[RMDB]
RNA sequence: GGGAACGACUCGAGUAGAGUCGAAAAAAUUCUUUUGGUUGACUCAAGUUUGGUUACUUCUGUUGGUGAUUCUAGUGAAAUCGCCACUAAAAUGUUUGAUUCCUUUGUUAAUAGUUUCGUCUCGCUGAAAGCUUCGGUUUCGACCGAAGCAAAAGAAACAACAACAACAAC
Reactivity to 2A3 in 0.01 (KOAc 150mM, MgCl2 10mM, bicine 150mM(pH8.5), 24C), signal-to-noise 1, nucleotides 027 to 129: a000a000u090u090c060u060u150u000u040g040g000u030u000g000a000c000u010c030a000a020g040u050u060u000g050g000u140u000a110c000u050u060c010u080g160u290u100g000g010u000g000a100u000u000c130u260a120g040u030g170a180a000a000u000c000g040c000c060a000c000u050a000a060a000a090u030g020u000u000u040g080a070u000u020c000c000u000u180u000g020u090u000a230a120u120a190g000u120u000u000c000g040u000c000u000c010g200c000u030g000a000a000a000